[RMDB]
Chemical mapping of a 207-nucleotide RNA with 2A3. The reactions ran in a buffer of 150 mM KOAc, 10 mM MgCl2 and 150 mM bicine (pH 8.5), at 24 C. For 2A3, 743 sequencing reads were counted. Values cover nucleotides 27 to 156.

RNA sequence: GGGAACGACUCGAGUAGAGUCGAAAAGUCAUGCCUUCGGGCAUGACAGGUACCGAGAGGUACCAAAUAGCGUACAGUAGACGCAGACUGUACGCUAAAAAAGUGUGUGUUCAAUAAGGGCCAAUUGAACACACACUAAAAUGGUUCAAGUGUGUGAGAUAGGCCUUUUAUUCGUAAAAGGCCUAUCAAAAGAAACAACAACAACAAC
Reactivity to 2A3 in 0.01 (KOAc 150mM, MgCl2 10mM, bicine 150mM(pH8.5), 24C), signal-to-noise 1, nucleotides 027 to 156: g000u010c010a000u000g000c010c000u000u040c070g060g000g000c000a000u000g010a000c000a020g000g030u020a000c000c000g050a030g000a050g060g010u020a010c010c010a110a030a000u050a020g000c000g000u000a000c000a000g010u060a010g050a130c030g010c110a010g010a000c000u000g000u000a000c000g000c000u000a000a020a000a000a000a000g000u020g000u000g000u010g000u000u000c000a010a000u020a110a110g060g060g110c060c070a030a030u010u000g000a010a000c000a000c000a000c000a000c000u000a000a000a040a020u260g040g070u110u100c130a160a130g020u050g010u010g000u010g160a000